RNA sequence: GGGAACGACUCGAGUAGAGUCGAAAAUAGAAGUCGCGAUAAAUGGGCGCCGCCGGAGCGGAGGGAGAUCCGAGCGGCGGCGGCAAGCUGGCUGCGAGCGGCUGAGCAGCACUCCAAGCUCGAACAACUUAAAUUGUUAGUUCGCUAACAAUUUAAGAAAAGAAACAACAACAACAAC
Reactivity to 2A3 in 0.01 (KOAc 150mM, MgCl2 10mM, bicine 150mM(pH8.5), 24C), signal-to-noise 3, nucleotides 027 to 126: u120a020g120a120a010g050u050c030g010c030g060a070u090a150a180a080u180g050g030g110c010g000c000c010g000c000c030g030g030a230g070c020g020g010a040g030g070g040a140g030a110u000c000c000g010a040g050c020g000g000c000g010g000c000g010g030c000a000a010g010c030u080g070g000c000u030g020c020g010a030g010c000g030g000c000u000g000a010g000c020a010g010c020a020c020u040c020c000a070a040g010c010u020c030g050a060a020c040a030a010
Reactivity to DMS in 0.01 (KOAc 150mM, MgCl2 10mM, bicine 150mM(pH8.5), 24C), signal-to-noise 4, nucleotides 027 to 126: u000a120g010a120a050g030u000c030g000c020g020a130u010a060a140a110u010g010g010g010c020g010c010c000g020c000c010g000g010a140g030c000g000g000a040g010g020g010a140g010a140u000c010c010g000a060g010c000g010g000c000g010g020c010g000g000c030a040a070g010c020u000g010g010c030u010g000c040g010a120g020c030g000g020c050u010g010a050g010c030a060g010c050a180c070u000c010c040a100a120g010c030u000c030g000a090a070c160a060a140
Structure probing data (2A3 and DMS) for a 177-nucleotide construct. It was measured as part of the RMDB library M2PK90. Reactivities are given for positions 27 through 126. High DMS reactivity at an A or C suggests that its Watson-Crick edge is free.